[RMDB]
RNA sequence: GGGAACGACUCGAGUAGAGUCGAAAAGAUCUGCGCCGAUCCGAAACGCUAGCAAACAGCCCGCAUCAUGUCGUCUCCUAACUUCGACGUGAUGAAAUACUGAGCUUAUGCGAGUAAGCCUGUUAGCAAUAGAUCAGAACGUUCGCGUUCUGAUCAAGGCUCAUAUACCCUUCGGGGUAUAUGAGCCAAAAGAAACAACAACAACAAC
Reactivity to 2A3 in 0.01 (KOAc 150mM, MgCl2 10mM, bicine 150mM(pH8.5), 24C), signal-to-noise 1, nucleotides 027 to 156: g000a040u000c040u170g040c040g010c080c010g000a040u000c010c040g080a050a100a050c090g000c010u000a010g000c040a060a010a190c040a070g060c000c000c010g020c000a000u000c000a000u000g020u030c000g010u040c020u120c160c190u100a210a210c060u050u050c000g000a000c010g010u000g000a000u000g020a010a020a000u180a060c040u020g020a020g030c000u000u170a020u060g090c070g070a110g040u040a000a000g040c000c050u000g000u080u110a000g000c000a010a110u020a170g000a000u000c020a000g000a010a020c040g030u110u030c120g020c020g170u010u010c010u010g000a000u020c000a000a040